[RMDB]
RNA sequence: GGGAACGACUCGAGUAGAGUCGAAAAGCUAGUCGGAGACGACUAGCAACGAUCAGUUCGCUGAUCGGAUCGUGCAUUCCACCACGCUCGAAGCACGUAUAGGCGACGCGGAGCGUGUUACUGUAAAAUCAGGAUACUUAAUUAAUUAGGCGUCGCGCCUGAUUAGCGAUUUCGAUCGCUAAUCAGGAAAAGAAACAACAACAACAAC
Reactivity to DMS in 0.01 (KOAc 150mM, MgCl2 10mM, bicine 150mM(pH8.5), 24C), signal-to-noise 2, nucleotides 027 to 156: g030c030u010a010g000u010c030g050g030a300g010a240c000g040a020c010u040a020g030c010a010a000c010g010a010u010c000a030g020u000u010c300g020c010u000g020a000u010c000g010g020a040u000c040g040u000g090c020a300u010u000c030c020a110c240c010a050c000g000c010u020c020g010a150a120g000c020a050c070g060u000a120u000a100g050g040c000g020a030c000g000c030g040g040a080g030c030g010u010g000u000u000a090c040u000g030u000a140a100a080a140u000c060a040g030g030a290u020a060c180u040u010a100a070u000u040a050a260u000u000a080g020g030c030g010u000c010g030c030g020
Reactivity to 2A3 in 0.01 (KOAc 150mM, MgCl2 10mM, bicine 150mM(pH8.5), 24C), signal-to-noise 4, nucleotides 027 to 156: g000c000u000a000g000u000c000g000g030a040g010a050c000g000a000c010u000a000g000c000a000a000c000g000a000u000c000a000g030u090u080c140g050c140u020g010a010u000c000g000g030a100u130c030g020u020g040c020a120u100u010c010c010a050c030c020a000c010g000c010u000c020g080a110a040g050c040a010c050g050u060a110u070a120g070g000c000g000a000c010g000c000g010g020a010g020c000g000u010g010u020u110a040c000u000g020u030a020a060a030a140u110c010a010g050g000a030u060a150c100u140u130a060a080u130u110a050a090u050u080a140g130g000c000g000u000c000g000c000g010